[RMDB]
RNA sequence: GGGAACGACUCGAGUAGAGUCGAAAAGGAGGACGAAGCAUAUUUCUGUUUCUGGAGGAUUAUUUAUAAUCUGCCGGAAAGUCUUGCAGGUGGCUGGGAUAUGUUUAGUCUGGUAGAAUUAAGCACGAAAACGUGUCCUUGUUCGCAAGGACACGAACAUGUAUGGCUUCUUCGGAAGCCAUACAUGAAAAGAAACAACAACAACAAC
Reactivity to DMS in 0.01 (KOAc 150mM, MgCl2 10mM, bicine 150mM(pH8.5), 24C), signal-to-noise 2, nucleotides 027 to 156: g020g030a250g020g020a040c030g000a090a090g000c040a080u000a020u000u000u010c010u010g000u010u010u010c000u000g010g010a040g020g000a030u010u010a020u010u010u000a110u000a070a010u000c000u000g000c020c010g030g000a050a020a090g010u000c030u050u010g010c090a100g010g010u000g010g030c010u000g010g020g020a060u000a010u000g010u000u000u000a070g000u000c010u020g020g040u000a080g010a070a130u010u010a040a070g010c020a070c080g000a080a050a100a150c000g030u000g020u010c000c010u000u000g000u000u010c260g040c040a020a050g020g000a020c010a000c010g000a030a130
Reactivity to 2A3 in 0.01 (KOAc 150mM, MgCl2 10mM, bicine 150mM(pH8.5), 24C), signal-to-noise 3, nucleotides 027 to 156: g100g020a050g000g000a000c000g020a020a010g040c010a010u010a020u080u040u030c060u080g110u050u060u020c010u020g010g020a020g040g000a010u010u020a020u020u200u020a110u050a020a020u020c010u050g060c010c020g050g010a060a040a040g030u020c050u090u200g080c040a030g130g050u040g080g000c030u010g000g000g000a000u020a010u060g010u000u020u060a010g000u000c000u000g010g040u080a040g030a130a090u170u100a120a010g060c040a010c080g080a030a000a010a040c010g000u000g000u020c000c010u000u000g010u050u100c190g000c100a000a000g000g010a010c000a000c000g000a000a000